Chemical mapping of a 177-nucleotide RNA with 2A3 and DMS.
For 2A3, 9,795 sequencing reads were counted.
Conditions: 150 mM KOAc, 10 mM MgCl2 and 150 mM bicine (pH 8.5), 24 C.
The DMS profile rests on 4,961 reads.
Source: RMDB library TTRDES, as collected in RNAgym.
DMS adducts were read by reverse transcription with MarathonRT.
[RMDB]
RNA sequence: GGGAACGACUCGAGUAGAGUCGAAAAGAUAUGGAUUCAGGGUUCUUUUGACGCUCUAGUAUCGGAAACGAUACGAAGAGCGAUAAGAAUUUGAAUCCUAAGUCAAACCAUCUCUUCGGAGAUGGAAGAUUCAUCAUUUGUUCGCAAAUGAUGAAUCAAAAGAAACAACAACAACAAC
Reactivity to 2A3 in 0.01 (KOAc 150mM, MgCl2 10mM, bicine 150mM(pH8.5), 24C), signal-to-noise 4, nucleotides 027 to 126: g010a020u070a020u090g000g010a000u000u010c020a030g160g130g090u020u020c020u100u180u190u300g300a210c100g000c000u020c020u000a010g010u000a010u000c000g000g000a030a040a030c000g000a000u000a010c010g000a090a010g000a000g010c010g000a000u010a000a010g000a010a000u050u010u040g010a000a010u000c000c010u000a070a000g040u030c060a090a010a090c010c010a000u000c000u000c000u060u100c300g190g000a010g000a010u010g010g000a020a020
Reactivity to DMS in 0.01 (KOAc 150mM, MgCl2 10mM, bicine 150mM(pH8.5), 24C), signal-to-noise 4, nucleotides 027 to 126: g010a020u000a240u010g000g010a010u010u000c000a020g020g030g010u000u000c010u000u000u000u020g010a230c090g030c010u000c010u000a300g010u000a000u000c000g010g010a080a030a130c000g000a020u000a000c000g010a090a090g000a010g030c000g020a020u010a010a000g000a020a020u010u020u010g010a040a010u000c000c000u010a020a100g000u000c010a150a150a300c010c000a000u000c000u000c000u000u010c240g020g000a010g010a010u000g000g000a070a050